[RMDB]
RNA sequence: GGGAACGACUCGAGUAGAGUCGAAAAAAUAUUUUUAAGUGGAACCAAAAUAGGCAUCCUUACAAAUCAGGAAGACUGACUUGACACGUUUGUAAAUGGUAGAACGGUGGCUACUGUGAGUGGGGAGUAGCACUCUAACUUUCGAGUUAGAGUGCUAAAAAGAAACAACAACAACAAC
Reactivity to DMS in 0.01 (KOAc 150mM, MgCl2 10mM, bicine 150mM(pH8.5), 24C), signal-to-noise 1, nucleotides 027 to 126: a060a050u010a070u000u030u010u000u010a100a140g010u010g000g000a150a180c010c070a050a060a060a110u010a060g000g010c090a100u000c040c030u000u000a110c100a040a150a070u000c090a030g010g000a090a060g000a070c040u000g010a040c010u010u000g040a150c110a040c070g010u010u040u010g000u010a090a100a060u020g030g010u000a040g000a070a040c100g000g010u000g000g000c040u020a040c050u000g010u000g010a200g010u000g010g030g000g000a060g000
Background:
The record gives the reactivity of an RNA of 177 nucleotides to DMS. It was measured as part of the RMDB library OK2TRN. The RNA was probed in 150 mM KOAc, 10 mM MgCl2 and 150 mM bicine (pH 8.5) at 24 C.